Conditions: 150 mM KOAc, 10 mM MgCl2 and 150 mM bicine (pH 8.5), 24 C. The record gives the reactivity of an RNA of 177 nucleotides to 2A3. Reactivities are given for positions 27 through 126. The data come from the RNA Mapping Database (RMDB), library OK1LIB.
[RMDB]
RNA sequence: GGGAACGACUCGAGUAGAGUCGAAAACGUGUUAGCCAGGAUGGUCUUCAUCUCCUGACUUCAUGAUUUGCCUGCCUCGGUCUCCCAAAGUGCUGGGAUUACAGGUGUGAGCCACCGCGCCUGGCCACCCGGCCCAAGGAUUCGUCCUUGGGCCGGGAAAAGAAACAACAACAACAAC
Reactivity to 2A3 in 0.01 (KOAc 150mM, MgCl2 10mM, bicine 150mM(pH8.5), 24C), signal-to-noise 2, nucleotides 027 to 126: c000g000u000g030u160u010a000g000c000c050a000g020g020a080u250g080g060u130c160u140u140c180a110u090c000u000c020c000u020g070a100c000u020u020c040a020u020g070a100u020u020u070g020c000c000u040g030c020c000u000c000g000g020u000c000u000c000c010c000a100a000a050g080u140g000c020u040g000g000g110a130u030u140a160c030a020g000g010u040g020u040g070a040g100c000c000a070c040c050g010c020g010c000c000u000g010g060c000c020a080